RNA sequence: GGGAACGACUCGAGUAGAGUCGAAAAUACCGCAGGCCUGCGGUGCGGCAGUGUGGAGACCUACCGUAAGCCGUGUUGUUUUGACAACCGGGAGAAAGCGUAUGCGGAGGCAGCGCUUUCAGGGUCUAAAAGUAUGGGAUCUUCGGAUCCCAUACAAGUUACCGUUCAUCUUCGGAUGAACGGUAACAAAAGAAACAACAACAACAAC
Reactivity to 2A3 in 0.01 (KOAc 150mM, MgCl2 10mM, bicine 150mM(pH8.5), 24C), signal-to-noise 2, nucleotides 027 to 156: u120a020c000c010g030c020a040g000g050c010c050u040g000c020g020g000u000g040c030g030g000c000a050g040u120g010u110g180g080a100g020a190c000c000u020a020c030c030g020u010a050a000g070c000c010g000u000g010u020u000g010u000u050u070u140g080a020c020a030a030c000c000g010g000g010a050g000a020a010a000g000c000g020u100a300u200g020c090g010g100a020g170g100c000a000g010c000g000c000u000u000u000c000a020g000g000g000u000c010u030a030a070a050a080g000u000a000u000g000g000g010a000u040c010u030u060c100g100g000a000u000c010c000c000a000u000a000c000a000a000